[RMDB]
Background
Structure probing data (2A3) for a 177-nucleotide construct. The reactions ran in a buffer of 150 mM KOAc, 10 mM MgCl2 and 150 mM bicine (pH 8.5), at 24 C. Values cover nucleotides 27 to 126.
RNA sequence: GGGAACGACUCGAGUAGAGUCGAAAAAUGCAAGGUCAUUACUUCAUUCAAAUCCAGAUUUUAUAAUCAAUGAUCCAUCAGAAAUUAAUACAGUAUUAUAAAAUUUGUUAAAACAGAGAAUACCAUGCACAUUCGUCCUAUUCGUAGGACGAAUGUGAAAAGAAACAACAACAACAAC
Reactivity to 2A3 in 0.01 (KOAc 150mM, MgCl2 10mM, bicine 150mM(pH8.5), 24C), signal-to-noise 2, nucleotides 027 to 126: a000u060g010c070a010a020g050g000u060c020a030u020u190a090c020u050u030c080a110u060u070c030a040a050a100u010c030c000a000g000a000u040u000u000u000a030u000a000a010u030c090a040a080u120g040a070u140c070c000a060u080c020a030g150a160a280a110u140u170a140a060u160a140c010a000g150u230a110u030u000a010u020a050a010a000a020u000u020u010g020u050u060a070a130a170a130c070a020g090a000g010a070a000u000a100c010c100a020u040g010